An RNA of 177 nucleotides, treated with 2A3 and DMS and read out base by base.
Conditions: 150 mM KOAc, 10 mM MgCl2 and 150 mM bicine (pH 8.5), 24 C.
The DMS profile rests on 2,446 reads.
The 2A3 profile rests on 3,838 reads.
Reactivities are given for positions 27 through 126.
RNA sequence: GGGAACGACUCGAGUAGAGUCGAAAAGAUAUGGAUGUCCGUAACAUCUACUGAGCGUUGAAAUCGGAAACGAUGGAGCUCGGUAGUGGGACAUCCUAAGUCAAAGUUCUUACUUCGGUAAGAACAAUCUUAGUAAUGCGUUCGCGCAUUACUAAGAAAAAGAAACAACAACAACAAC
Reactivity to 2A3 in 0.01 (KOAc 150mM, MgCl2 10mM, bicine 150mM(pH8.5), 24C), signal-to-noise 1, nucleotides 027 to 126: g040a010u060a060u170g000g000a000u000g000u010c000c010g020u030a050a070c030a230u070c010u000a000c000u020g000a010g010c010g180u300u070g020a040a030a000u010c000g000g000a080a070a040c010g000a000u000g000g060a000g000c000u000c000g000g000u000a000g020u030g000g000g010a000c000a000u000c010c010u010a050a000g020u010c050a010a070a180g000u020u000c000u020u010a010c000u020u110c300g130g000u000a010a000g000a010a040c010a010a010
Reactivity to DMS in 0.01 (KOAc 150mM, MgCl2 10mM, bicine 150mM(pH8.5), 24C), signal-to-noise 3, nucleotides 027 to 126: g010a050u000a300u010g000g010a010u000g010u010c010c010g010u000a050a140c170a020u000c000u010a000c000u000g000a030g020c010g000u000u000g000a060a160a020u000c000g000g000a150a120a180c000g010a000u000g000g000a180g010c000u000c000g010g020u000a000g020u000g010g000g010a030c010a010u000c000c000u010a010a090g000u010c040a080a080a140g010u000u000c010u000u000a000c000u000u030c200g020g010u000a010a000g010a000a000c000a100a060